[RMDB]
RNA sequence: GGGAACGACUCGAGUAGAGUCGAAAAGGACAGGGAGGAUCAAUGAGGUACCGGAUCCAGUAGGUACCAAGCUAGCUAUAUAUACGCUCGCUAGCAUAGAGCGUUACCGGAAACGGGACCUGUCCGAACUAAUAGUGGGUUUCGACCCACUAUUAGUAAAAGAAACAACAACAACAAC
Reactivity to DMS in 0.01 (KOAc 150mM, MgCl2 10mM, bicine 150mM(pH8.5), 24C), signal-to-noise 9, nucleotides 027 to 126: g010g010a020c010a010g010g000g010a140g020g010a100u000c150a090a110u010g010a150g000g010u000a010c000c010g010g000a180u000c040c050a060g010u000a180g010g010u000a010c010c010a090a080g000c020u000a030g000c020u010a090u010a090u010a150u010a100c170g010c100u000c140g000c030u000a030g010c050a140u010a100g000a050g010c030g020u000u000a090c010c010g010g000a050a090a170c020g000g000g000a060c010c010u000g000u000c000c010g010a050
Reactivity to 2A3 in 0.01 (KOAc 150mM, MgCl2 10mM, bicine 150mM(pH8.5), 24C), signal-to-noise 4, nucleotides 027 to 126: g000g000a000c000a000g010g040g010a100g070g060a080u090c040a030a130u190g070a080g040g000u010a020c000c000g030g020a040u040c020c010a000g030u080a020g040g000u010a010c000c000a020a010g000c010u020a010g000c030u030a020u010a010u010a020u030a300c070g020c070u050c050g000c010u030a020g030c020a040u110a030g030a000g000c030g030u020u050a060c020c000g050g000a060a040a000c010g010g000g020a020c000c010u010g000u020c000c000g010a010